[RMDB]
An RNA of 177 nucleotides, treated with DMS and 2A3 and read out base by base.
The DMS profile rests on 823 reads.
It was measured as part of the RMDB library M2PK50.
High DMS reactivity at an A or C suggests that its Watson-Crick edge is free.
2A3 adducts were read by reverse transcription with SuperScript II with manganese.

RNA sequence: GGGAACGACUCGAGUAGAGUCGAAAACUCUAGGGGUUCGCCCCUAGAGAAAUAAAAGCUCAACAAACACCAAAAACAAGAGCAUGGUGAAAGUAUAAAUAAAAAGCAUGGCGUUCGCGCCAUGCAACUCGCUAUAUAAGUUCGCUUAUAUAGCGAGAAAAGAAACAACAACAACAAC
Reactivity to DMS in 0.01 (KOAc 150mM, MgCl2 10mM, bicine 150mM(pH8.5), 24C), signal-to-noise 1, nucleotides 027 to 126: c000u000c000u000a000g000g000g010g020u000u000c100g050c020c000c000c000u030a030g000a000g000a000a080a110u010a050a110a150a230g010c010u000c000a070a030c200a070a120a170c080a060c000c010a060a090a080a130a060c200a080a090g010a030g060c030a040u010g020g000u010g020a080a120a110g020u000a100u000a020a070a050u000a050a040a040a100a120g010c000a000u000g030g030c000g020u000u000c140g020c010g000c000c000a000u000g020c000a030a020
Reactivity to 2A3 in 0.01 (KOAc 150mM, MgCl2 10mM, bicine 150mM(pH8.5), 24C), signal-to-noise 2, nucleotides 027 to 126: c010u000c000u010a020g000g000g000g030u040u090c140g090c000c000c010c000u000a000g000a000g000a000a000a020u020a000a080a010a010g070c020u040c090a020a070c060a060a200a020c030a000c010c000a020a020a080a070a090c090a140a090g030a030g090c060a040u020g020g000u020g050a130a100a060g070u080a110u070a300a170a060u170a040a090a050a020a010g010c000a000u000g010g010c000g030u060u090c220g000c000g000c050c000a000u000g000c010a000a000